[RMDB]
RNA sequence: GGGAACGACUCGAGUAGAGUCGAAAACGCUGGGUGUGAAGAGAAGUAUUUGUCAGUCAAUAAGAGCUACUGAAGCGCGCACGGUAGCUCUUAUUGACUUGGAUUUAAUACAUUCUCCACACCUGUGCUGAAGCGCGCACGGCAACCGAAAGGUGCGGUGUAAAACUACCUUCGGGUAGUUUUACACAAAAGAAACAACAACAACAAC
Reactivity to 2A3 in 0.01 (KOAc 150mM, MgCl2 10mM, bicine 150mM(pH8.5), 24C), signal-to-noise 2, nucleotides 027 to 156: c020g000c010u030g000g030g030u000g000u020g050a300a290g000a000g000a020a000g000u020a020u020u060u140g030u040c050a030g010u010c010a030a000u000a000a000g000a000g010c010u010a000c010u030g090a300a080g100c080g010c000g010c050a010c020g010g000u020a000g000c020u000c000u000u000a000u010u010g000a000c000u000u030g000g000a000u160u190u180a000a000u000a020c090a250u000u030c000u020c000c000a000c000a000c000c000u000g020u010g000c000u060g020a100a040g010c030g020c000g000c000a010c020g060g020c020a070a100c050c000g040a090a020a030g110g000u030g020c050g030
Reactivity to DMS in 0.01 (KOAc 150mM, MgCl2 10mM, bicine 150mM(pH8.5), 24C), signal-to-noise 1, nucleotides 027 to 156: c030g030c020u000g000g000g030u010g030u010g000a020a010g000a010g010a120a180g020u000a020u000u010u000g000u010c020a180g000u000c010a040a030u000a000a000g000a030g030c000u000a010c000u010g010a070a110g040c030g000c050g040c020a300c000g010g010u010a000g010c000u000c000u000u000a000u000u000g000a000c000u000u010g020g000a050u000u000u000a010a020u000a010c000a150u000u000c010u010c010c000a030c000a010c000c000u000g020u010g050c010u000g000a120a080g030c020g030c030g080c000a220c000g000g010c030a120a090c030c010g060a160a130a210g040g010u000g010c010g020
The data come from the RNA Mapping Database (RMDB), library RNAMAK.
This 207-nucleotide RNA was probed chemically with 2A3 and DMS.
The RNA was probed in 150 mM KOAc, 10 mM MgCl2 and 150 mM bicine (pH 8.5) at 24 C.
DMS adducts were read by reverse transcription with MarathonRT.
The 2A3 profile rests on 2,060 reads.
2A3 adducts were read by reverse transcription with SuperScript II with manganese.